[RMDB]
RNA sequence: GGGAACGACUCGAGUAGAGUCGAAAAGAUAUGGACUACUCAUCGGGAUCGAAGAACUCGGAAACGAGGGAGAUCCGAUGAGGUAGUCCUAAGUCAAAACGCUAGAUUGCUUCGGCAAUCUAGCGAAUCUCUACUCUGAGUUCGCUCAGAGUAGAGAAAAAGAAACAACAACAACAAC
Reactivity to 2A3 in 0.01 (KOAc 150mM, MgCl2 10mM, bicine 150mM(pH8.5), 24C), signal-to-noise 2, nucleotides 027 to 126: g010a010u070a040u190g000g000a000c000u010a020c010u010c000a010u020c050g300g140g130a050u030c010g110a300a080g010a070a060c000u000c010g010g050a060a070a060c010g000a000g020g000g010a030g000a000u000c030c000g000a000u030g000a010g010g010u010a000g000u010c000c000u000a020a000g030u000c020a020a040a060a140c030g000c010u000a000g000a010u010u000g000c000u040u080c290g090g000c000a010a000u010c000u000a010g000c010g010a000a000
Reactivity to DMS in 0.01 (KOAc 150mM, MgCl2 10mM, bicine 150mM(pH8.5), 24C), signal-to-noise 3, nucleotides 027 to 126: g010a040u020a300u010g010g020a010c000u000a030c000u000c010a000u000c020g030g020g010a050u000c020g020a080a160g000a140a180c010u010c010g000g000a140a090a200c010g000a010g000g000g000a080g000a010u000c000c010g010a000u000g000a010g010g020u000a000g010u000c000c000u010a010a070g010u000c050a080a040a100a140c010g000c000u000a000g000a020u000u000g000c000u000u020c190g010g010c000a000a010u000c000u000a010g000c000g010a000a040

This 177-nucleotide RNA was probed chemically with 2A3 and DMS. For 2A3, 5,195 sequencing reads were counted. The DMS profile rests on 3,041 reads. For DMS the reverse transcriptase was MarathonRT. It was measured as part of the RMDB library TTRDEL. DMS (dimethyl sulfate) methylates the pairing face of unpaired adenines and cytosines.